[RMDB]
RNA sequence: GGGAACGACUCGAGUAGAGUCGAAAAUUAAGAGACUUGCUGGUUUGUUGUGUCAACGGGGCAAACUGGGACUUUCACCGAUGACUGGGCUCAUCAUCCGGGUGUGUUCGUCCAAGCCGGAGAGCCGAGUAGAGAUCCACGCGCGAACUGCGCACGGGCUAACAUAGUGCUUCGGCACUAUGUUAGCAAAAGAAACAACAACAACAAC
Reactivity to 2A3 in 0.01 (KOAc 150mM, MgCl2 10mM, bicine 150mM(pH8.5), 24C), signal-to-noise 1, nucleotides 027 to 156: u180u100a100a030g040a020g030a170c060u060u230g070c010u030g000g010u010u030u000g000u000u000g000u000g000u000c010a000a000c020g000g000g010g000c000a010a040a000c000u030g000g010g040a020c090u110u240u130c300a080c060c000g000a000u010g000a000c000u000g000g040g000c020u000c020a020u010c000a010u030c010c000g000g000g030u040g000u010g000u000u050c060g040u060c020c010a050a030g000c000c000g030g000a020g000a000g000c000c010g020a000g010u180a000g010a000g000a000u000c120c070a080c150g040c000g030c000g010a180a090c070u110g040c030g000c030a030c030g020g090
Chemical mapping of a 207-nucleotide RNA with 2A3. The data come from the RNA Mapping Database (RMDB), library ARCHII. The RNA was probed in 150 mM KOAc, 10 mM MgCl2 and 150 mM bicine (pH 8.5) at 24 C.